RNA sequence: GGGAACGACUCGAGUAGAGUCGAAAAUAGACGACGCAAGUACAUCUGCUAGUGCUCCCAACGAAAGUUGAUAGCGAUGUGCACGUUUAGGAGAUAAAUAGCUAGUAUCUUUCUACUCGGAUUCCCCUCUGUCGUCAUAGAGGGGUUUCAAGCCAAAGAACCAUAGAUAGUUCGCUAUCUAUGGUUCAAAAGAAACAACAACAACAAC
Reactivity to DMS in 0.01 (KOAc 150mM, MgCl2 10mM, bicine 150mM(pH8.5), 24C), signal-to-noise 3, nucleotides 027 to 156: u000a160g010a130c090g010a040c010g000c010a080a110g020u010a030c020a000u000c010u020g060c010u000a040g010u010g010c030u010c020c020c000a120a120c300g030a130a050a120g000u000u000g030a140u010a010g000c020g000a040u020g020u010g000c020a060c020g010u000u000u000a090g000g010a080g000a100u000a070a110a140u010a130g030c070u010a130g000u000a070u000c030u000u000u010c020u000a020c010u000c010g000g010a080u000u000c000c000c000c000u000c010u000g020u000c160g010u000c110a090u000a020g010a060g000g040g010g020u000u000u010c010a040a050g030c050c060a030a160a220
Reactivity to 2A3 in 0.01 (KOAc 150mM, MgCl2 10mM, bicine 150mM(pH8.5), 24C), signal-to-noise 6, nucleotides 027 to 156: u090a000g050a010c040g010a000c030g020c100a150a040g000u010a010c000a020u010c100u220g000c000u020a010g030u040g100c060u070c030c030c000a010a010c020g060a030a020a020g020u030u020g070a080u050a020g010c010g010a000u010g000u000g010c030a050c110g000u010u040u070a050g040g040a080g020a030u120a100a160a040u190a060g030c070u050a020g060u040a110u120c010u030u180u030c000u020a020c000u000c020g070g010a030u070u090c000c000c020c000u010c010u010g040u020c040g070u040c010a000u040a020g010a010g000g020g000g000u000u010u020c020a010a000g010c020c030a110a060a020